This 207-nucleotide RNA was probed chemically with DMS and 2A3. DMS (dimethyl sulfate) methylates the pairing face of unpaired adenines and cytosines. 2A3 adducts were read by reverse transcription with SuperScript II with manganese. For DMS the reverse transcriptase was MarathonRT. Conditions: 150 mM KOAc, 10 mM MgCl2 and 150 mM bicine (pH 8.5), 24 C.
[RMDB]
RNA sequence: GGGAACGACUCGAGUAGAGUCGAAAAUUUGCUAACGGUAUCGAAUGGCAUAAGUUUGAAACGAGUGAAGAAAUAAUUUCUACUUACUUAAUAGAUGAUGUGGUAACGGGUGUUAUUAAUGGGGCUGUAUAUACAUUUUCAAAUAAUGAACUAAACAGGACAAAGUCUUAUUCGUAAGACUUUGUCCAAAAGAAACAACAACAACAAC
Reactivity to DMS in 0.01 (KOAc 150mM, MgCl2 10mM, bicine 150mM(pH8.5), 24C), signal-to-noise 1, nucleotides 027 to 156: u000u000u000g030c000u000a050a120c030g000g000u000a060u020c020g020a170a110u010g030g000c050a090u000a070a100g000u000u000u000g020a040a050a070c050g030a130g030u010g020a100a060g020a100a080a070u000a050a150u010u000u000c010u020a060c050u000u000a070c010u000u000a040a130u010a090g030a060u010g010a100u010g080u000g050g000u000a070a060c110g000g000g040u000g010u000u000a030u010u010a080a150u000g010g020g010g040c040u010g030u000a060u010a100u000a080c000a040u000u000u000u010c060a030a040a120u000a020a060u000g000a100a120c050u010a050a050a110c080a170
Reactivity to 2A3 in 0.01 (KOAc 150mM, MgCl2 10mM, bicine 150mM(pH8.5), 24C), signal-to-noise 1, nucleotides 027 to 156: u110u020u080g000c000u050a010a020c000g000g000u040a050u070c040g030a090a100u040g010g000c040a030u070a140a070g020u000u040u040g070a070a040a050c040g010a000g000u070g030a010a010g140a080a110a000u180a030a020u070u000u020c020u000a070c020u080u000a030c000u120u160a120a050u000a220g030a000u110g000a060u030g020u000g000g060u000a010a010c010g000g000g000u010g000u030u080a050u030u000a050a120u060g000g000g000g000c000u000g010u010a090u000a000u000a020c000a010u010u070u070u090c000a050a000a000u120a020a070u300g000a020a010c060u280a000a030a160c280a020